The record gives the reactivity of an RNA of 207 nucleotides to 2A3 and DMS. For 2A3, 3,275 sequencing reads were counted. It was measured as part of the RMDB library M2RFPK. The reactions ran in a buffer of 150 mM KOAc, 10 mM MgCl2 and 150 mM bicine (pH 8.5), at 24 C.
[RMDB]
RNA sequence: GGGAACGACUCGAGUAGAGUCGAAAAGUCUGUGCGUUUCCAUUUGAGUAUCCUGAAAACGGGCUUUUCUGCAUGGAACGUACAUAUUAAAUAGUAGGAGUGCAUAGUGGCCCGUAUAGCAGGCAUUGAGGCGAGGAUUGUUUCGACAAUCCUCGAACAACAGCAUGUGUUUCGACACAUGCUGUUGAAAAGAAACAACAACAACAAC
Reactivity to 2A3 in 0.01 (KOAc 150mM, MgCl2 10mM, bicine 150mM(pH8.5), 24C), signal-to-noise 4, nucleotides 027 to 156: g050u020c060u050g040u030g070c050g010u000u060u010c020c030a080u120u050u090g050a080g020u090a130u090c000c000u020g030a030a010a050a090c040g000g000g000c000u060u050u070u030c070u010g000c010a010u030g020g060a100a020c030g050u040a010c010a000u040a000u020u220a050a120a110u180a030g030u010a030g000g130a050g020u020g000c010a010u020a100g050u050g040g000c030c000c000g000u020a030u070a040g030c000a010g030g000c020a020u050u210g080a030g050g090c010g000a000g000g000a000u000u000g010u020u110u040c080g040a000c000a000a010u010c000c010u000c000g000a000a000
Reactivity to DMS in 0.01 (KOAc 150mM, MgCl2 10mM, bicine 150mM(pH8.5), 24C), signal-to-noise 3, nucleotides 027 to 156: g020u000c030u000g020u000g020c020g010u000u000u000c020c020a160u000u000u010g000a150g000u000a080u000c000c020u020g000a050a110a160a140c040g010g000g010c050u010u000u000u000c050u000g030c030a030u010g000g000a060a100c010g010u000a130c080a100u000a110u000u000a050a100a200u000a150g000u000a090g010g010a300g030u000g010c010a070u000a090g010u000g000g010c020c010c000g010u010a030u000a120g020c030a030g020g040c080a140u000u000g000a150g030g000c000g030a030g030g020a020u010u000g020u000u000u010c240g000a060c000a020a010u000c000c000u000c010g000a010a060